[RMDB]
RNA sequence: GGGAACGACUCGAGUAGAGUCGAAAAGAUAUGGAGCCAUGGAUCCGCGUUUAGACAUGCUGGAUAAGGGUCGGAAACGACCCGUAACAGCAACAGCUAAACGCGGAUCCCGCUGGCUCCUAAGUCACAAUACUAGCAGCUUCGGCUGCUAGUAUUGAAAAGAAACAACAACAACAAC
Reactivity to DMS in 0.01 (KOAc 150mM, MgCl2 10mM, bicine 150mM(pH8.5), 24C), signal-to-noise 2, nucleotides 027 to 126: g030a050u000a300u000g020g010a000g050c000c000a030u000g000g000a000u010c000c000g020c000g020u000u000u000a010g000a040c150a300u000g020c000u000g020g010a090u000a160a290g010g010g010u000c000g000g000a080a170a280c000g000a000c020c000c000g000u000a050a280c000a000g000c000a010a060c300a170g000c020u000a000a000a000c000g020c000g020g000a000u010c000c000c000g010c000u000g000g020c010u010c000c010u000a000a060g000u000c010a300
The record gives the reactivity of an RNA of 177 nucleotides to DMS. DMS adducts were read by reverse transcription with MarathonRT. The DMS profile rests on 1,889 reads. Conditions: 150 mM KOAc, 10 mM MgCl2 and 150 mM bicine (pH 8.5), 24 C. The data come from the RNA Mapping Database (RMDB), library TTRINS.